[RMDB]
RNA sequence: GGGAACGACUCGAGUAGAGUCGAAAACGGUGUCUUGCCCUGAUGUCCGGUUUUUUCCGUCAGCGCAGUGCCCGGCUGUUCUGUUGCGGCGCGUCUCCCCACAUAGCGCGGGAUGAAUGACACGACCCCCUUUUACUAAGUUCGCUUAGUAAAAGGGAAAAGAAACAACAACAACAAC
Reactivity to 2A3 in 0.01 (KOAc 150mM, MgCl2 10mM, bicine 150mM(pH8.5), 24C), signal-to-noise 2, nucleotides 027 to 126: c010g020g030u030g010u030c020u040u090g040c020c000c010u040g030a050u050g050u080c030c010g050g000u020u060u030u000u100u110c030c000g010u020c010a020g010c010g000c040a020g000u010g030c010c000c000g020g000c010u020g060u090u030c050u060g100u090u100g050c060g020g010c000g000c000g050u020c030u010c030c010c030c000a060c010a040u170a010g090c090g010c050g020g000g000a020u050g050a050a060u080g010a010c010a000c070g060a070c010c000
Reactivity to DMS in 0.01 (KOAc 150mM, MgCl2 10mM, bicine 150mM(pH8.5), 24C), signal-to-noise 5, nucleotides 027 to 126: c190g010g020u000g010u000c010u010u010g010c030c040c020u010g000a090u000g000u000c080c050g020g000u000u000u000u000u000u000c040c010g010u000c030a090g010c120g000c030a050g010u000g010c020c020c020g000g000c030u000g000u000u000c060u000g020u000u000g010c060g010g000c070g010c060g010u000c060u000c020c010c010c040a070c120a130u010a100g020c090g010c040g010g000g000a060u000g000a070a070u010g000a060c030a040c050g010a150c070c040